Chemical mapping of a 177-nucleotide RNA with DMS and 2A3. The DMS profile rests on 2,499 reads. The RNA was probed in 150 mM KOAc, 10 mM MgCl2 and 150 mM bicine (pH 8.5) at 24 C. Reactivities are rounded to 0.1 and cut off at 0 and 3. The 2A3 profile rests on 930 reads. Values cover nucleotides 27 to 126.
RNA sequence: GGGAACGACUCGAGUAGAGUCGAAAAGUGCAUUGACUGUUCUAGAAAAGCCAGGAGAAGUCUUUCCUUCUACUUAUUAUCAAGAUGGGGCUGCAGGGAGGCAGGUGUAUCUCAGCAUCAUCACCUGCAAGAUACGAGUCUUCGGACUCGUAUCUUGAAAAGAAACAACAACAACAAC
Reactivity to DMS in 0.01 (KOAc 150mM, MgCl2 10mM, bicine 150mM(pH8.5), 24C), signal-to-noise 3, nucleotides 027 to 126: g020u010g000c050a070u000u000g010a050c070u000g000u000u000c030u010a120g010a100a120a100a160g010c130c090a030g010g000a070g010a070a070g010u000c030u010u000u010c060c010u000u010c060u000a070c060u000u010a070u010u020a080u010c110a040a060g010a090u010g020g020g000g020c050u000g010c070a050g020g010g030a060g020g020c020a020g000g020u000g010u020a050u000c060u000c060a080g010c090a030u000c090a090u010c050a060c040c000u010g000
Reactivity to 2A3 in 0.01 (KOAc 150mM, MgCl2 10mM, bicine 150mM(pH8.5), 24C), signal-to-noise 1, nucleotides 027 to 126: g030u010g000c040a090u100u060g070a050c010u010g130u090u050c020u040a050g120a070a150a000a010g070c040c070a020g030g090a070g070a060a050g020u080c000u050u080u020c040c000u000u110c010u020a150c030u190u100a130u140u080a080u210c060a040a050g050a100u050g000g000g120g050c040u020g000c060a010g040g000g020a040g010g140c040a030g000g010u020g020u030a130u010c100u020c030a030g060c020a010u020c020a020u030c050a050c030c010u040g010